[RMDB]
RNA sequence: GGGAACGACUCGAGUAGAGUCGAAAAGAUAUGGAAACAUAUCGCUAUUUGAGCCGAAGAACUCGGAAACGAGGGAGGCUAUGUAGCGCCGAGUGUUUCCUAAGUCAAAGCCAGCUUCGGCUGGCAAGCCGUAGUAUAAGUUCGCUUAUACUACGGCAAAAGAAACAACAACAACAAC
Reactivity to 2A3 in 0.01 (KOAc 150mM, MgCl2 10mM, bicine 150mM(pH8.5), 24C), signal-to-noise 6, nucleotides 027 to 126: g020a010u100a020u170g000g010a010a020a000c000a000u060a040u060c000g000c000u010a060u020u110u240g280a000g010c000c010g130a300a060g030a060a010c010u000c010g000g090a150a040a030c000g000a010g010g000g020a010g000g000c000u000a020u050g010u010a000g010c010g030c110c150g180a210g090u020g000u000u000u000c000c000u020a150a010g040u030c060a110a050a030g000c000c000a000g000c010u070u110c260g160g000c000u010g000g000c010a000a010
Reactivity to DMS in 0.01 (KOAc 150mM, MgCl2 10mM, bicine 150mM(pH8.5), 24C), signal-to-noise 6, nucleotides 027 to 126: g000a030u010a300u010g000g000a020a010a020c000a010u000a100u000c000g010c000u000a000u000u010u000g010a030g020c010c000g010a100a170g010a150a200c000u000c000g000g000a100a090a200c000g010a020g000g000g000a060g020g010c010u000a020u000g000u000a000g000c020g020c300c140g000a110g010u000g000u000u000u000c000c000u010a050a110g010u000c060a060a120a130g000c000c000a010g000c000u000u020c190g020g000c000u000g000g010c000a010a030

Source: RMDB library TTRDEL, as collected in RNAgym. This 177-nucleotide RNA was probed chemically with 2A3 and DMS. The reactions ran in a buffer of 150 mM KOAc, 10 mM MgCl2 and 150 mM bicine (pH 8.5), at 24 C. 2A3 adducts were read by reverse transcription with SuperScript II with manganese.